[RMDB]
RNA sequence: GGGAACGACUCGAGUAGAGUCGAAAACUGUCUAUGGACGCCGUAUCGUCACGGUACUGCCCAUUCGCAACCAGGCGCGACCGAUAUAGUGACGAGGGACUCACUAUUCCGCGAACAGGCUGUGCGGAAUCCUGCACACCUUCGGGUGUGCAGGAUUAAAAGAAACAACAACAACAAC
Reactivity to 2A3 in 0.01 (KOAc 150mM, MgCl2 10mM, bicine 150mM(pH8.5), 24C), signal-to-noise 4, nucleotides 027 to 126: c010u100g100u060c050u070a060u090g040g000a030c050g020c000c000g050u010a060u070c100g130u160c130a070c200g040g000u000a050c010u060g000c000c000c000a060u080u040c010g010c080a050a070c020c030a060g120g040c030g000c000g060a030c020c060g070a030u040a010u010a230g010u010g000a010c020g040a170g080g050g020a020c000u000c020a000c000u020a040u050u020c020c010g020c000g050a100a030c040a010g170g000c020u060g060u090g100c000g010g020
Reactivity to DMS in 0.01 (KOAc 150mM, MgCl2 10mM, bicine 150mM(pH8.5), 24C), signal-to-noise 2, nucleotides 027 to 126: c040u000g010u030c090u030a070u010g000g000a050c110g000c060c020g000u000a050u020c040g050u000c190a110c000g020g010u000a020c020u000g050c000c010c000a030u000u020c000g050c040a070a170c050c070a040g000g000c010g000c030g000a200c070c160g010a100u020a000u020a050g010u000g040a030c010g020a040g030g010g000a230c220u000c000a020c050u000a050u000u020c060c050g000c000g000a100a080c110a200g000g020c140u030g020u020g030c080g010g020